[RMDB]
RNA sequence: GGGAACGACUCGAGUAGAGUCGAAAAGUACUCAUGAAACGUUUGGAAUCUAUACAUCAUCUGUGGUCUGUAGUGUAUGAUCAUCUUAAUGUUGUGAAUGGCGAAGAACGAUGCUAUAUACAUAUGCAUUCAUCUCAUCAAAGUCCUAUGCUGAGUACCUGCAUUAUAUGUUCGCAUAUAAUGCAGGAAAAGAAACAACAACAACAAC
Reactivity to DMS in 0.01 (KOAc 150mM, MgCl2 10mM, bicine 150mM(pH8.5), 24C), signal-to-noise 3, nucleotides 027 to 156: g020u000a080c000u000c020a130u000g010a060a110a100c070g020u000u010u010g020g010a150a090u000c010u000a190u000a040c010a040u000c040a040u010c030u010g030u000g020g020u000c050u000g000u000a110g000u000g000u000a060u020g000a050u000c040a070u000c090u000u000a050a070u000g000u000u000g030u000g010a060a100u000g030g030c040g020a130a120g020a060a100c060g010a070u000g030c020u000a080u010a120u000a190c150a080u000a130u000g020c020a080u000u000c050a130u000c040u000c030a110u010c050a050a080a110g010u000c010c020u010a100u000g010c040u010g010a060g030u000a130
Reactivity to 2A3 in 0.01 (KOAc 150mM, MgCl2 10mM, bicine 150mM(pH8.5), 24C), signal-to-noise 8, nucleotides 027 to 156: g020u020a020c010u020c050a090u120g070a060a110a030c060g020u020u030u060g020g030a040a040u020c050u080a080u080a070c020a030u080c020a040u010c100u100g050u060g050g050u040c020u050g110u130a110g020u050g020u050a060u060g030a030u030c020a010u010c030u030u100a100a040u050g010u040u010g030u020g050a120a080u070g020g020c040g040a050a030g010a110a030c050g020a010u020g000c030u030a020u020a020u040a160c090a080u110a040u190g020c000a000u060u070c010a040u030c030u000c010a140u020c030a070a070a040g030u010c000c000u050a050u130g030c030u010g020a010g000u020a050
Structure probing data (DMS and 2A3) for a 207-nucleotide construct. DMS (dimethyl sulfate) methylates the pairing face of unpaired adenines and cytosines. Source: RMDB library OK3TST, as collected in RNAgym. The RNA was probed in 150 mM KOAc, 10 mM MgCl2 and 150 mM bicine (pH 8.5) at 24 C. Values cover nucleotides 27 to 156. For DMS, 6,370 sequencing reads were counted. The 2A3 profile rests on 6,550 reads.